[RMDB]
RNA sequence: GGGAACGACUCGAGUAGAGUCGAAAAACCACCGCUGAGACGACCGCGUGUACAAGGUCGUUCAGAGGUGGCGAGGAGGGAGGUGCCGAGGCGUUGCGAUGGGUUCGGCAGCAGCAGCAGCAGCGGAGGAGCUUGUAUGGUUCGCCGUACAAGCUCCAAAAGAAACAACAACAACAAC
Reactivity to 2A3 in 0.01 (KOAc 150mM, MgCl2 10mM, bicine 150mM(pH8.5), 24C), signal-to-noise 7, nucleotides 027 to 126: a000c000c000a010c010c010g020c010u030g020a040g020a130c010g010a000c000c010g050c080g180u200g070u210a140c080a150a080g000g000u000c000g000u000u000c000a000g000a010g000g000u010g000g010c040g010a090g030g050a140g020g030g000a040g020g060u060g010c010c010g020a040g030g090c040g020u060u070g010c020g030a090u090g030g030g000u050u050c000g030g000c000a000g040c010a000g010c010a010g000c010a010g000c000a000g030c020g020g050a090
Reactivity to DMS in 0.01 (KOAc 150mM, MgCl2 10mM, bicine 150mM(pH8.5), 24C), signal-to-noise 4, nucleotides 027 to 126: a180c000c010a020c000c000g000c000u010g000a060g010a020c010g000a010c000c000g010c300g000u040g020u050a140c160a090a210g000g020u000c000g010u000u000c000a000g010a030g010g020u000g000g010c080g010a110g000g000a120g020g000g000a080g030g000u010g000c000c000g000a030g000g010c090g030u000u000g010c080g020a160u030g000g000g000u020u010c020g010g000c010a040g010c060a090g000c080a080g010c060a050g000c020a070g000c010g000g020a250